[RMDB]
RNA sequence: GGGAACGACUCGAGUAGAGUCGAAAAACUGGCCUCGGUUACGACCGAGGCCAGAAAAGUGAAAUGAUGGCAAUCAUCUUUCGGGACUGACCUGAAAUGAAGAGAAUACUCAUUGCUGAUCACUUAAGAUUGUAAAUACUUUCGAGUAUUUACAAUCAAAAGAAACAACAACAACAAC
Reactivity to 2A3 in 0.01 (KOAc 150mM, MgCl2 10mM, bicine 150mM(pH8.5), 24C), signal-to-noise 8, nucleotides 027 to 126: a000c010u000g000g000c020c000u020c030g030g000u050u050a090c250g030a000c040c000g000a000g000g010c000c000a000g000a000a000a000a000g020u020g030a020a030a110u190g060a050u150g030g000c020a020a030u020c000a050u010c000u020u000u000c000g020g000g030a120c160u220g180a290c030c000u000g010a010a020a030u190g020a070a040g060a000g070a140a070u140a190c030u060c060a020u030u000g020c040u050g050a050u030c010a010c010u060u060a060a030
Reactivity to DMS in 0.01 (KOAc 150mM, MgCl2 10mM, bicine 150mM(pH8.5), 24C), signal-to-noise 7, nucleotides 027 to 126: a110c010u000g000g010c000c010u010c000g010g010u000u010a110c220g020a060c010c000g010a010g020g020c000c000a000g000a000a030a050a040g010u000g000a040a100a100u000g000a070u010g010g000c090a070a130u000c090a070u010c030u010u000u000c000g000g000g010a300c250u020g010a160c010c000u010g010a010a010a030u020g010a040a090g000a080g000a170a130u010a080c090u000c050a100u000u000g000c050u000g000a130u000c020a050c010u000u020a080a160